[RMDB]
RNA sequence: GGGAACGACUCGAGUAGAGUCGAAAAGGAUGGAGUUUCUAUAAAGCAUUUACCCUAUCUGUUAUCACCUAACGCAAGUUAUCCACCAUCCAAGCGUCGAAACUGUAUGAAAACAAGGUUUUAGUUUAGGUUAAAUACUAUUCGUAGUAUUUAACCUAAAAGAAACAACAACAACAAC
Reactivity to 2A3 in 0.01 (KOAc 150mM, MgCl2 10mM, bicine 150mM(pH8.5), 24C), signal-to-noise 9, nucleotides 027 to 126: g060g010a030u070g040g000a070g040u050u080u000c090u070a180u140a130a100a000g050c050a050u050u080u190a120c020c010c010u030a070u060c040u050g060u080u050a050u070c050a030c040c020u010a030a010c020g000c050a050a020g000u030u040a060u110c030c020a030c010c010a030u000c010c010a030a010g040c020g050u060c030g050a060a060a070c060u080g040u140a080u150g120a050a050a020a040c080a090a080g130g040u010u010u020u050a120g010u010u020u010
Reactivity to DMS in 0.01 (KOAc 150mM, MgCl2 10mM, bicine 150mM(pH8.5), 24C), signal-to-noise 6, nucleotides 027 to 126: g010g010a040u000g010g000a220g010u000u010u010c040u010a120u010a120a100a120g010c060a060u010u000u020a080c050c050c020u010a050u010c050u020g010u010u000a070u010c080a090c060c040u000a050a040c060g000c110a060a060g010u010u020a060u010c060c050a080c020c000a050u000c010c020a080a110g010c060g020u000c060g000a050a060a040c060u000g010u000a070u020g010a040a040a070a080c140a090a110g000g010u000u000u010u010a090g010u010u000u000

This 177-nucleotide RNA was probed chemically with 2A3 and DMS. It was measured as part of the RMDB libraries RFM100 and RFMREP. For DMS the reverse transcriptase was MarathonRT. For 2A3 the reverse transcriptase was SuperScript II with manganese. The reactions ran in a buffer of 150 mM KOAc, 10 mM MgCl2 and 150 mM bicine (pH 8.5), at 24 C.